Structure probing data (DMS and 2A3) for a 177-nucleotide construct. The reactions ran in a buffer of 150 mM KOAc, 10 mM MgCl2 and 150 mM bicine (pH 8.5), at 24 C. 2A3 adducts were read by reverse transcription with SuperScript II with manganese.
[RMDB]
RNA sequence: GGGAACGACUCGAGUAGAGUCGAAAAAGAAACAGUUUCGUGACACAAGGAACACGAUGAUUGACAACAUGUUGAGCACUUUUCACGCAUUGGUGGCCGAUGACCCAAAGGCUCCUCUCAACUUCCGCAUUAAGCAUUACUUCGGUAAUGCUUAAUGAAAAGAAACAACAACAACAAC
Reactivity to DMS in 0.01 (KOAc 150mM, MgCl2 10mM, bicine 150mM(pH8.5), 24C), signal-to-noise 9, nucleotides 027 to 126: a080g010a140a070a080c050a050g020u000u000u000c020g020u000g010a120c130a130c190a100a110g010g010a110a130c030a020c030g010a030u000g010a050u000u010g000a100c110a060a060c100a050u000g010u000u000g000a060g010c120a070c060u000u000u010u010c050a070c140g000c090a060u010u010g010g020u000g010g010c010c010g010a090u000g000a110c040c020c030a060a070a180g000g000c020u000c050c050u000c040u010c040a040a060c090u000u000c050c080g010
Reactivity to 2A3 in 0.01 (KOAc 150mM, MgCl2 10mM, bicine 150mM(pH8.5), 24C), signal-to-noise 7, nucleotides 027 to 126: a000g130a030a040a000c030a040g010u020u030u040c020g010u030g050a030c010a010c050a240a130g120g030a190a020c010a020c030g030a040u120g020a030u030u130g040a050c050a070a000c020a080u070g010u060u040g040a010g020c030a030c070u050u050u110u100c120a080c110g040c040a070u030u100g050g010u040g050g000c010c000g040a040u090g070a080c020c020c000a020a020a010g020g020c010u030c010c020u020c010u000c000a020a070c010u070u020c030c020g080